Notes: Structure probing data (2A3 and DMS) for a 177-nucleotide construct. For 2A3, 3,506 sequencing reads were counted. The reactions ran in a buffer of 150 mM KOAc, 10 mM MgCl2 and 150 mM bicine (pH 8.5), at 24 C. For DMS the reverse transcriptase was MarathonRT.
[RMDB]
RNA sequence: GGGAACGACUCGAGUAGAGUCGAAAAGAUAUGGAGCCUACCACGGGAGCUGUGCAUCGGAAACGAUGCUCAGCGACGAUCGUGAAGGCUCCUAAGUCAAACGGAACGUCCUUCGGGACGUUCCGAACACACUGUUGCUGUUCGCAGCAACAGUGUGAAAAGAAACAACAACAACAAC
Reactivity to 2A3 in 0.01 (KOAc 150mM, MgCl2 10mM, bicine 150mM(pH8.5), 24C), signal-to-noise 1, nucleotides 027 to 126: g010a010u030a010u080g010g000a020g030c030c020u150a280c300c050a000c000g040g000g060a210g000c000u000g000u010g060c010a000u000c010g000g010a040a010a010c020g000a000u010g010c020u000c010a010g080c020g020a000c050g070a130u090c000g010u010g030a070a070g010g000c000u000c000c000u000a010a010g000u000c020a100a020a050c010g020g000a010a000c000g000u020c030c000u060u240c290g000g030g000a000c000g000u000u010c020c010g000a000a000
Reactivity to DMS in 0.01 (KOAc 150mM, MgCl2 10mM, bicine 150mM(pH8.5), 24C), signal-to-noise 2, nucleotides 027 to 126: g000a010u020a300u020g000g000a010g020c000c000u000a140c230c030a010c000g000g010g010a090g030c010u000g000u010g020c000a010u000c000g030g000a100a070a140c020g000a020u000g000c000u000c000a000g010c000g020a080c300g030a080u000c010g010u000g000a140a040g000g000c010u000c000c010u000a000a060g000u000c030a070a150a240c040g000g000a010a000c000g020u000c000c000u030u000c240g020g010g010a000c000g000u000u000c000c000g000a010a100